Structure probing data (DMS) for a 177-nucleotide construct.

RNA sequence: GGGAACGACUCGAGUAGAGUCGAAAACUGGUGUCGAAAUCUGGUGUACUACAAAAACCUUUUCGGUUGAUGGUGUCUGCACUGUGGGCGCGCAUUUAGUCACAGCAGAUGACCCUGUGUAUGCAACAGAUACUUCCUGGUUCGCCAGGAAGUAUCUAAAAGAAACAACAACAACAAC
Reactivity to DMS in 0.01 (KOAc 150mM, MgCl2 10mM, bicine 150mM(pH8.5), 24C), signal-to-noise 3, nucleotides 027 to 126: c030u000g000g040u010g020u000c010g000a070a150a090u000c010u000g020g010u010g010u000a040c010u000a040c180a030a030a090a030a000c000c010u000u020u010u010c160g030g000u000u000g010a070u020g010g020u000g010u000c000u020g020c040a110c210u030g020u000g010g020g020c030g020c040g020c040a040u000u010u010a040g000u000c110a010c010a050g010c020a040g010a070u000g000a050c020c030c030u010g010u010g010u010a060u010g000c120a080a120c200
Values cover nucleotides 27 to 126.